Source: RMDB library OK2TRN, as collected in RNAgym. Chemical mapping of a 177-nucleotide RNA with DMS and 2A3. The 2A3 profile rests on 950 reads. High 2A3 reactivity points to a flexible backbone, as in loops and unpaired stretches. Conditions: 150 mM KOAc, 10 mM MgCl2 and 150 mM bicine (pH 8.5), 24 C.
RNA sequence: GGGAACGACUCGAGUAGAGUCGAAAAUUGCCGUACCAUUCCUGCCAGCUUCAUUGCGGUUUUACCGCCAACACAAUCGAGCAUGGCAUCAGCAUCCCCGAUUGGUGGUAAUGGAUUGCUAUAAGUCCGUUUUGACGAUGUUCGCAUCGUCAAAACGAAAAGAAACAACAACAACAAC
Reactivity to DMS in 0.01 (KOAc 150mM, MgCl2 10mM, bicine 150mM(pH8.5), 24C), signal-to-noise 2, nucleotides 027 to 126: u000u010g000c020c040g000u000a090c070c050a210u000u000c010c040u000g000c030c010a080g000c040u000u000c280a060u000u000g020c010g000g020u000u000u010u000a070c110c040g020c030c090a060a070c170a140c140a020a020u000c120g060a070g020c070a090u020g000g020c020a050u000c030a060g030c000a120u030c100c000c000c090g000a080u000u000g020g000u000g000g010u000a010a080u000g010g000a090u000u000g040c060u020a090u010a120a090g000u010c020
Reactivity to 2A3 in 0.01 (KOAc 150mM, MgCl2 10mM, bicine 150mM(pH8.5), 24C), signal-to-noise 1, nucleotides 027 to 126: u060u070g000c020c020g000u040a090c010c040a040u010u070c010c020u060g000c020c000a020g000c000u080u000c030a060u000u130g020c030g000g070u020u000u060u210a050c000c060g000c000c000a100a060c080a000c010a110a130u090c010g000a020g020c110a180u060g060g000c020a020u060c050a030g030c000a100u050c000c000c010c000g050a040u010u220g000g050u060g040g080u040a000a030u020g010g000a000u110u120g050c060u100a020u020a300a000g090u100c030